RNA sequence: GGGAACGACUCGAGUAGAGUCGAAAAGACUCUUACAAAGGGAAAGUUGUAGGAGAUUGCUUCUCGAACUUUCCAUCUGCACGAUUCGAGAAGCAUGGUUGCCAAAUCGUGCAGUUAUUGGCAACAGCUAGUAGUAGGCUUUCGAGCCUACUACUAGAAAAGAAACAACAACAACAAC
Reactivity to 2A3 in 0.01 (KOAc 150mM, MgCl2 10mM, bicine 150mM(pH8.5), 24C), signal-to-noise 4, nucleotides 027 to 126: g010a010c010u000c000u010u020a020c010a020a040a010g150g110g100a120a110a090g070u030u020g020u020a010g000g060a030g010a080u060u160g030c020u020u020c000u000c010g030a130a090c060u100u110u040c030c020a030u020c010u040g010c010a000c030g060a070u080u080c040g010a030g010a050a000g000c010a000u060g080g000u020u020g010c010c010a010a050a030u040c010g000u020g020c000a010g000u030u100a150u090u070g010g000c010a020a000c010a040g070
Reactivity to DMS in 0.01 (KOAc 150mM, MgCl2 10mM, bicine 150mM(pH8.5), 24C), signal-to-noise 5, nucleotides 027 to 126: g000a170c010u000c000u000u000a010c000a020a040a090g010g030g000a090a120a120g010u000u000g010u000a000g000g010a020g010a180u010u010g010c040u000u000c000u000c000g020a040a110c300u000u000u000c030c030a130u010c040u000g000c010a020c000g000a070u000u000c040g000a050g000a040a040g030c030a020u010g000g010u000u000g000c010c010a080a090a060u000c020g010u000g000c020a030g000u000u000a060u000u000g000g010c040a030a020c030a190g000

This 177-nucleotide RNA was probed chemically with 2A3 and DMS. For DMS the reverse transcriptase was MarathonRT. The RNA was probed in 150 mM KOAc, 10 mM MgCl2 and 150 mM bicine (pH 8.5) at 24 C. The data come from the RNA Mapping Database (RMDB), library OK2TRN.